RNA sequence: GGGAACGACUCGAGUAGAGUCGAAAAAUCGAUUAAGGCACUCUCCUGCGAGGUUUCGCGGGUGAGAUCUAACAUGGCGUUGUCGUAGGCCAUGCGGAUAAGACGAAGAUCUUGCUCCUCGAUAGGGCAUUAGUACGGCGUUCGCGCCGUACUAAUGAAAAGAAACAACAACAACAAC
Reactivity to DMS in 0.01 (KOAc 150mM, MgCl2 10mM, bicine 150mM(pH8.5), 24C), signal-to-noise 3, nucleotides 027 to 126: a060u010c040g010a080u000u000a090a180g010g000c030a260c010u000c000u000c010c000u000g010c000g020a040g010g020u010u010u000c010g020c000g010g000g010u010g010a010g010a040u010c000u000a120a230c020a010u010g000g010c040g030u010u010g020u000c190g010u010a120g000g010c010c010a000u000g000c120g000g000a060u000a050a040g010a030c060g000a120a120g000a110u010c010u000u000g010c020u000c070c090u000c050g010a050u000a130g000g010g000
Reactivity to 2A3 in 0.01 (KOAc 150mM, MgCl2 10mM, bicine 150mM(pH8.5), 24C), signal-to-noise 1, nucleotides 027 to 126: a020u060c030g010a010u130u130a070a050g020g010c040a020c060u010c020u030c000c000u000g000c040g010a020g300g190u130u300u000c000g000c030g030g000g000u020g000a000g010a000u000c000u020a030a090c010a010u020g030g000c110g130u160u150g220u300c150g080u100a060g090g000c000c010a000u010g000c040g030g000a060u060a090a070g010a010c050g070a140a040g060a100u020c030u040u000g000c020u050c030c000u010c020g020a050u090a090g080g020g000